[RMDB]
Structure probing data (2A3) for a 177-nucleotide construct. The data come from the RNA Mapping Database (RMDB), library OK1LIB. The reactions ran in a buffer of 150 mM KOAc, 10 mM MgCl2 and 150 mM bicine (pH 8.5), at 24 C. For 2A3 the reverse transcriptase was SuperScript II with manganese.
RNA sequence: GGGAACGACUCGAGUAGAGUCGAAAAUCAAGUUGAAGGUCUUGAUGAGUUACGUGCCAAAUUACGUCUCAAUUGGGGUUUCAUCGAUGAAGUUGAAGAUCCUCAAGAUGAUCAACAAUAUGUUGACAUUAGCGGAUUCGUUCGCGAAUCCGCUAAUAAAAGAAACAACAACAACAAC
Reactivity to 2A3 in 0.01 (KOAc 150mM, MgCl2 10mM, bicine 150mM(pH8.5), 24C), signal-to-noise 1, nucleotides 027 to 126: u090c000a000a000g000u000u060g300a080a060g030g140u020c000u200u000g120a140u000g050a210g000u190u300a020c000g050u260g000c030c130a050a190a100u140u180a050c050g000u000c000u000c090a050a190u030u050g020g000g000g000u000u000u000c000a000u050c030g300a150u170g020a300a050g000u000u000g000a000a000g000a050u080c000c000u000c000a060a180g000a000u020g000a000u050c020a020a000c000a000a230u290a140u200g000u000u000g000a000c000